[RMDB]
RNA sequence: GGGAACGACUCGAGUAGAGUCGAAAAGUUAACCCAUCAUAGUAAGAGUCUAAAAAGUGGUCGACCUUUUCGUUUGUGUGCAUUGUACGCUGUUCAACUGGUGUUUUCAUAUUUCUUAAUGUUGGUUGCCAUGACCUACAACGCUUAUGUCAUCCUACCCUAAUCCAUCCUUCGGGAUGGAUUAGGGAAAAGAAACAACAACAACAAC
Reactivity to 2A3 in 0.01 (KOAc 150mM, MgCl2 10mM, bicine 150mM(pH8.5), 24C), signal-to-noise 1, nucleotides 027 to 156: g050u050u190a090a120c010c040c000a050u070c040a000u030a010g000u060a140a100g050a010g060u070c070u220a070a080a030a060a020g020u030g040g040u140c020g030a090c010c000u110u170u150u200c060g010u050u060u100g070u030g000u020g070c000a000u030u050g030u000a030c040g000c040u000g010u070u100c030a080a080c030u040g010g000u030g030u010u060u060u030c070a050u020a150u090u150u100c040u030u260a140a090u100g090u070u020g000g000u030u030g070c000c030a070u100g010a030c030c030u020a000c030a090a050c040g000c040u060u100a030u050g010u000c000a000u040c010c010u000a010